[RMDB]
RNA sequence: GGGAACGACUCGAGUAGAGUCGAAAACGACGGGUCUUCGGACCCGUCGAAAUAAUGCGUAGCUCGCGCUACGCAGGCAUCGAGUAGGUCGAGCCACGUACAAAAGCUUCGAGUUCGCUCGAAGCAACUAGUGCCAUAUCUUCGGAUAUGGCACUAGAAAAGAAACAACAACAACAAC
Reactivity to DMS in 0.01 (KOAc 150mM, MgCl2 10mM, bicine 150mM(pH8.5), 24C), signal-to-noise 2, nucleotides 027 to 126: c060g040a020c000g000g050g030u000c010u000u010c200g020g000a010c000c000c000g000u000c000g000a000a050a090u010a100a100u010g000c020g040u010a010g000c000u010c300g050c300g010c000u000a000c000g060c040a020g020g030c090a080u000c010g020a050g000u010a100g010g000u000c060g010a160g020c000c030a140c160g000u000a100c180a060a080a130a140g000c000u000u000c000g010a000g010u010u000c150g010c000u000c010g000a010a000g000c020a040a030
Reactivity to 2A3 in 0.01 (KOAc 150mM, MgCl2 10mM, bicine 150mM(pH8.5), 24C), signal-to-noise 2, nucleotides 027 to 126: c010g000a000c000g020g000g000u020c020u080u060c210g100g010a020c000c020c000g010u000c000g000a000a000a000u110a020a050u050g010c010g000u000a010g000c030u040c170g120c030g020c050u000a000c010g000c030a010g000g000c010a270u100c030g000a000g050u220a090g160g290u030c020g040a010g000c040c050a040c060g010u090a050c030a070a110a060a010g000c020u000u000c000g000a000g010u110u020c210g110c040u000c000g010a000a000g000c010a000a000
The record gives the reactivity of an RNA of 177 nucleotides to DMS and 2A3. The DMS profile rests on 1,084 reads. Reactivities are given for positions 27 through 126. It was measured as part of the RMDB library M2PK50. For 2A3, 1,696 sequencing reads were counted.